[RMDB]
RNA sequence: GGGAACGACUCGAGUAGAGUCGAAAAGAUAUGGAGGGUAGAUCGAUAAGAGUAUGUCGGAAACGACAUGACUCUUUUGACGAUCCUACCCUCCUAAGUCAAAGAACUUGACUUCGGUCAAGUUCAAGUGUAUCGACUAGUUCGCUAGUCGAUACACAAAAGAAACAACAACAACAAC
Reactivity to DMS in 0.01 (KOAc 150mM, MgCl2 10mM, bicine 150mM(pH8.5), 24C), signal-to-noise 2, nucleotides 027 to 126: g000a020u010a260u000g010g000a000g020g000g020u000a010g000a040u000c010g000a260u010a020a010g000a040g020u000a010u010g020u000c000g000g000a080a030a090c000g010a010c000a000u000g000a030c000u000c000u000u000u010u020g020a260c130g000a000u000c160c130u000a010c010c000c000u000c000c000u000a000a070g000u000c020a120a110a170g000a010a030c000u000u010g000a010c000u000u000c250g030g000u010c000a000a000g000u000u000c010a030a050
Reactivity to 2A3 in 0.01 (KOAc 150mM, MgCl2 10mM, bicine 150mM(pH8.5), 24C), signal-to-noise 1, nucleotides 027 to 126: g000a020u040a000u100g000g000a000g000g010g040u020a010g000a010u000c050g060a110u070a300a000g000a000g000u010a000u020g010u020c000g000g070a070a020a000c000g020a020c000a000u000g130a010c000u000c030u030u040u000u110g080a050c030g000a010u020c020c020u010a010c000c000c000u000c000c000u000a000a000g000u010c000a010a020a090g010a010a010c010u010u000g000a000c000u070u120c300g120g000u010c020a020a000g000u000u010c010a010a000